[RMDB]
RNA sequence: GGGAACGACUCGAGUAGAGUCGAAAAGCGGGGCUUGAAACGCGGGUAGCGCGCACGCCCGGCGAAGAAGUUCGCAUUCGCGGUGUGCUGGUGCCGAAGUGUCUGCUGCAACGGCACGCUCGACACCUAGAACAUACCGUAUUCGUACGGUAUGUAAGACACAAAUAGGGUUCGCCCUAUUUGUGUCAAAAGAAACAACAACAACAAC
Reactivity to DMS in 0.01 (KOAc 150mM, MgCl2 10mM, bicine 150mM(pH8.5), 24C), signal-to-noise 2, nucleotides 027 to 156: g010c020g020g010g010g040c030u000u010g010a070a120a050c040g000c060g010g010g000u000a130g040c000g010c010g010c020a060c070g030c010c000c000g010g000c000g010a030a110g010a240a190g010u000u000c010g000c010a120u000u000c020g010c070g080g010u000g020u000g000c020u010g030g010u000g030c000c000g040a100a120g000u000g020u000c020u000g020c060u010g020c160a120a170c110g010g000c010a020c020g010c060u010c010g000a050c030a050c020c020u000a140g010a140a060c000a010u000a010c000c010g010u000a030u000u010c280g040u000a000c000g020g030u000a000u000g010u000a030a110
Reactivity to 2A3 in 0.01 (KOAc 150mM, MgCl2 10mM, bicine 150mM(pH8.5), 24C), signal-to-noise 5, nucleotides 027 to 156: g020c040g000g020g030g000c040u080u120g070a070a090a050c050g000c060g020g020g070u120a060g070c010g000c020g010c080a010c010g010c000c000c000g030g000c030g000a020a010g060a050a030g150u070u050c030g000c050a060u150u090c030g030c090g050g000u000g000u010g030c060u080g020g030u010g010c010c000g010a090a030g030u060g050u100c110u110g060c050u100g020c050a040a020c030g000g000c020a010c020g020c030u030c020g030a020c010a030c010c000u030a040g020a120a010c000a000u000a000c000c000g000u000a010u020u060c150g030u040a010c000g000g000u000a000u010g000u000a020a020

Chemical mapping of a 207-nucleotide RNA with DMS and 2A3. For 2A3, 4,222 sequencing reads were counted. For DMS the reverse transcriptase was MarathonRT.